Background
The record gives the reactivity of an RNA of 177 nucleotides to DMS and 2A3. The RNA was probed in 150 mM KOAc, 10 mM MgCl2 and 150 mM bicine (pH 8.5) at 24 C. The data come from the RNA Mapping Database (RMDB), library M2PK50. DMS adducts were read by reverse transcription with MarathonRT. In probing experiments dimethyl sulfate is read out at A N1 and C N3, which are open when not base-paired. The 2A3 profile rests on 9,651 reads.
RNA sequence: GGGAACGACUCGAGUAGAGUCGAAAAUAACGUACUUUCGAGUACGUUAAGUCUCCCGGCGCUAGCAGGGCUGAAGAGAAGAUGGAGGAGCUGCUGGUGGAAUUAGGGGGGGAUUCGUCCCCCCCAAAGAAAACUAUCUAUUCGUAGAUAGUUUUCUAAAAGAAACAACAACAACAAC
Reactivity to DMS in 0.01 (KOAc 150mM, MgCl2 10mM, bicine 150mM(pH8.5), 24C), signal-to-noise 6, nucleotides 027 to 126: u000a010a010c000g010u000a000c000u000u010u010c130g010a020g030u000a000c000g000u000u000a000a080g010u000c160u000c000c010c020g020g010c060g010c030u000a020g020c040a040g010g010g010c030u000g010a210a140g000a140g010a090a100g000a090u010g010g010a300g010g000a060g010c020u000g000c030u010g000g020u000g000g010a090a090u010u010a110g010g010g010g020g020g010g010a020u000u010c130g000u000c000c000c000c000c000c000c000a000a010
Reactivity to 2A3 in 0.01 (KOAc 150mM, MgCl2 10mM, bicine 150mM(pH8.5), 24C), signal-to-noise 6, nucleotides 027 to 126: u020a000a000c000g000u010a000c010u040u070u120c200g020a000g000u000a000c000g000u000u000a010a000g030u000c030u030c060c000c000g080g070c020g000c010u010a000g010c010a020g100g220g000c030u050g050a130a030g070a040g060a300a060g100a090u170g040g080a070g020g020a040g060c010u000g000c000u010g010g020u040g030g110a160a160u140u110a300g000g000g020g000g010g000g010a010u020u030c060g040u000c010c010c000c000c000c000c000a000a010